[RMDB]
Structure probing data (2A3) for a 207-nucleotide construct.
RNA sequence: GGGAACGACUCGAGUAGAGUCGAAAAGCCACAUAUCCCGUGACAUUGCGAAAGCAAGGCUGGCGGUAGGUAGUCGUGGGCGGCGACAGCCUUGGACUGCGGCGUAAAGGUGUACCUGGGGCCGUUAUAACGCGGUAACAGUUCGCUGUUACCGCAAUCCAUACACGAGGUUCGCCUCGUGUAUGGAAAAAGAAACAACAACAACAAC
Reactivity to 2A3 in 0.01 (KOAc 150mM, MgCl2 10mM, bicine 150mM(pH8.5), 24C), signal-to-noise 2, nucleotides 027 to 156: g070c020c000a060c020a040u260a000u020c000c030c070g030u120g080a030c050a100u130u130g030c010g090a090a000a010g010c000a020a020g060g000c000u030g030g030c010g040g040u090a010g020g030u030a050g020u020c050g000u010g000g090g000c000g000g000c010g020a030c040a020g020c000c040u010u010g040g000a010c030u040g000c000g000g000c000g040u020a080a020a000g000g030u050g040u180a100c040c040u030g000g000g090g000c020c000g010u050u010a120u030a230a000c090g050c000g000g000u000a000a000c000a000g060u090u100c210g010c110u050g000u000u000a020c000c000g000c000a000a000
Notes: Conditions: 150 mM KOAc, 10 mM MgCl2 and 150 mM bicine (pH 8.5), 24 C. The 2A3 profile rests on 919 reads.